Structure probing data (DMS and 2A3) for a 177-nucleotide construct. The RNA was probed in 150 mM KOAc, 10 mM MgCl2 and 150 mM bicine (pH 8.5) at 24 C. The DMS profile rests on 892 reads. The data come from the RNA Mapping Database (RMDB), library OK1LIB.
RNA sequence: GGGAACGACUCGAGUAGAGUCGAAAAACUGGAAACCACGGAACCGGCGAUAACAACAUGUAUUCCCGGUUUUAAGGCCGCCCUCGGUGCCGGAAUAACCGCAGCCGGCGACAGCGCGCUAAAGCUAGCUCGUGUCAAUUUUCGAAUUGACACGAGCAAAAGAAACAACAACAACAAC
Reactivity to DMS in 0.01 (KOAc 150mM, MgCl2 10mM, bicine 150mM(pH8.5), 24C), signal-to-noise 1, nucleotides 027 to 126: a040c080u030g020g030a050a250a150c040c000a080c200g000g000a000a030c000c000g020g000c170g030a000u000a050a000c040a100a000c300a130u070g080u000a160u020u000c300c000c000g000g000u000u000u000u030a060a020g000g030c050c000g000c010c010c000u000c000g000g010u000g000c210c000g000g000a080a030u000a150a090c050c000g000c150a120g080c000c000g000g010c010g000a100c130a000g000c140g000c010g090c000u020a000a060a100g000c100u000a130
Reactivity to 2A3 in 0.01 (KOAc 150mM, MgCl2 10mM, bicine 150mM(pH8.5), 24C), signal-to-noise 2, nucleotides 027 to 126: a000c050u060g030g010a120a140a000c030c020a080c090g040g000a010a010c020c000g010g000c060g140a010u160a150a080c110a020a180c080a220u300g040u090a040u070u190c000c000c000g010g000u030u000u000u000a040a010g010g010c020c000g020c010c000c000u010c040g010g020u080g050c050c000g040g060a130a120u210a080a070c010c010g030c050a010g030c020c000g000g030c010g010a030c000a050g000c020g040c000g000c120u120a170a000a000g050c010u020a050